[RMDB]
RNA sequence: GGGAACGACUCGAGUAGAGUCGAAAAUGAAACAUGUUUGCAGCGCCAACGAUGGCAUAUAACUGUAUUUCGUCUGGAGAGUCAAGUGAGGACUAUGAAGCACAAUGCGAUAUCUUCUGGUUAUAUGGAUACGUACAAUCUUCGGAUUGUACGUAUCAAAAGAAACAACAACAACAAC
Reactivity to 2A3 in 0.01 (KOAc 150mM, MgCl2 10mM, bicine 150mM(pH8.5), 24C), signal-to-noise 9, nucleotides 027 to 126: u170g030a050a050a000c070a060u130g060u040u040u070g030c030a040g030c020g000c030c010a040a030c080g090a080u080g050g000c050a010u060a010u010a100a060c040u050g040u100a110u020u070u040c050g030u000c040u020g040g010a080g010a020g060u040c030a070a060g060u050g120a060g050g020a010c010u040a040u210g080a040a020g030c050a020c030a080a070u140g030c020g040a010u020a080u070c050u080u000c020u050g060g010u100u020a100u010a030u140g080
Reactivity to DMS in 0.01 (KOAc 150mM, MgCl2 10mM, bicine 150mM(pH8.5), 24C), signal-to-noise 7, nucleotides 027 to 126: u020g010a130a090a090c110a060u010g010u000u010u000g010c050a060g020c080g020c020c020a060a090c130g010a100u000g000g020c050a060u000a030u000a070a080c070u010g010u010a090u010u010u000c030g000u010c070u000g020g010a090g000a080g010u000c040a060a110g010u010g010a110g010g000a060c050u000a060u020g000a040a090g010c080a070c100a070a070u010g010c100g000a070u010a090u000c040u000u000c040u010g010g000u000u000a070u010a080u000g010